[RMDB]
RNA sequence: GGGAACGACUCGAGUAGAGUCGAAAAGUUCUACACACGGAAAGACUCAUGGGACGGUUAUCUCGACGAUUUGGCUAUCGAUUUGGCUGCCGACACUUGACGACUACCAUGUUAAUGACGGUGCGGUGUUAACCUACACGUUCGCGUGUAGGUUAACAAAAGAAACAACAACAACAAC
Reactivity to 2A3 in 0.01 (KOAc 150mM, MgCl2 10mM, bicine 150mM(pH8.5), 24C), signal-to-noise 1, nucleotides 027 to 126: g000u020u040c010u080a020c060a000c010a000c050g110g000a050a040a040g060a060c000u000c090a040u110g000g000g040a010c010g030g000u060u010a100u010c020u000c000g100a140c020g040a060u000u060u140g050g040c030u040a020u120c020g140a140u030u040u210g030g000c020u010g000c000c010g040a050c020a000c020u010u090g060a050c020g030a010c000u060a180c010c050a010u060g020u060u090a130a080u060g030a000c050g020g020u030g030c000g000g000u020
Reactivity to DMS in 0.01 (KOAc 150mM, MgCl2 10mM, bicine 150mM(pH8.5), 24C), signal-to-noise 1, nucleotides 027 to 126: g030u000u010c020u000a050c120a090c110a110c100g000g040a130a110a070g000a100c180u000c020a040u000g030g000g000a100c100g000g000u000u010a080u000c030u000c040g000a100c070g000a150u000u010u000g030g020c060u000a080u020c040g010a250u010u000u000g000g020c020u000g010c030c010g010a150c130a000c040u000u000g010a110c010g040a060c100u010a130c030c040a030u010g000u020u000a030a090u000g030a120c080g020g010u000g040c030g010g070u000